[RMDB]
RNA sequence: GGGAACGACUCGAGUAGAGUCGAAAAGCACCAUUAAUCAAUGAUUUAAAUCAUGGACCAAUUGCAUAUAUUGGUGCACGACAUCUCAUUUUAGAAGAAUUGGAGAAAAUGCUAAUCCAAUUGUCAAUCUGAAUGAGUCUUUCGAGACUCAUUCAGAAAAAGAAACAACAACAACAAC
Reactivity to DMS in 0.01 (KOAc 150mM, MgCl2 10mM, bicine 150mM(pH8.5), 24C), signal-to-noise 3, nucleotides 027 to 126: g000c000a040c010c030a050u000u020a060a110u010c060a070a000u000g000a030u000u000u070a070a110a050u040c090a010u010g020g010a050c100c070a040a140u030u000g000c210a040u010a100u000a060u010u000g010g020u000g030c000a060c110g000a070c280a070u000c020u010c010a030u000u000u000u020a090g000a050a080g020a020a030u000u000g000g000a020g000a070a010a120a140u030g020c300u030a100a220u010c000c000a000a030u000u000g020u000c080a120a150
Reactivity to 2A3 in 0.01 (KOAc 150mM, MgCl2 10mM, bicine 150mM(pH8.5), 24C), signal-to-noise 6, nucleotides 027 to 126: g030c010a050c020c010a050u020u130a100a070u090c120a040a020u020g060a040u000u180u270a210a250a050u040c030a040u070g080g070a060c030c050a040a090u120u110g050c130a100u130a010u020a040u180u060g000g000u020g010c000a010c040g070a050c030a110u020c010u020c040a120u070u140u120u160a050g030a210a010g050a030a010u000u000g000g050a010g020a040a150a060a050u070g020c040u040a010a030u000c000c000a010a010u020u010g140u070c060a070a130